[RMDB]
Conditions: 150 mM KOAc, 10 mM MgCl2 and 150 mM bicine (pH 8.5), 24 C. An RNA of 207 nucleotides, treated with 2A3 and DMS and read out base by base. The data come from the RNA Mapping Database (RMDB), library OK3TST.
RNA sequence: GGGAACGACUCGAGUAGAGUCGAAAAUGGAAAGUAAAGAAUGUCACUUUCUGACAGGCUCAGGAACCUCAAGUUAUGUAGGGAUCUCAAGAAGAUGGGGGAAUUCACCCAGUUCAUACAGGUGAAAUUGCUGUUGCAAAGAUUAUGAAUAUGAGAAAGCUAUCCUACGAUUCGUCGUAGGAUAGCUAAAAGAAACAACAACAACAAC
Reactivity to 2A3 in 0.01 (KOAc 150mM, MgCl2 10mM, bicine 150mM(pH8.5), 24C), signal-to-noise 2, nucleotides 027 to 156: u100g000g000a030a030a010g040u130a000a020a150g100a150a080u180g060u140c020a010c000u050u040u030c020u000g050a050c010a030g030g000c000u000c070a000g030g000a070a060c040c070u010c010a050a110g060u110u050a050u210g060u060a020g000g000g060a050u000c100u000c020a180a000g030a090a040g090a170u060g010g000g000g000g060a010a020u030u010c010a010c050c030c010a020g000u140u070c030a010u090a130c010a010g030g000u040g040a000a020a170u000u050g010c000u010g030u040u020g020c040a000a060a030g050a080u060u070a060u230g070a030a060u160a060u200g010a060g130a090a100
Reactivity to DMS in 0.01 (KOAc 150mM, MgCl2 10mM, bicine 150mM(pH8.5), 24C), signal-to-noise 1, nucleotides 027 to 156: u000g000g030a040a050a050g010u000a040a080a050g000a120a130u000g010u010c030a140c020u000u000u000c010u000g010a110c120a090g030g010c030u000c080a140g080g050a060a060c070c010u000c000a070a180g020u000u010a030u000g000u020a050g030g020g010a080u010c030u000c060a070a130g060a110a050g000a060u000g000g000g000g030g040a040a150u030u000c010a000c010c030c010a140g000u010u010c060a110u020a100c110a060g030g020u000g000a060a030a090u000u000g020c000u000g010u000u000g010c000a050a070a140g000a160u000u000a070u010g020a050a050u010a070u000g010a050g000a110a170

DMS adducts were read by reverse transcription with MarathonRT.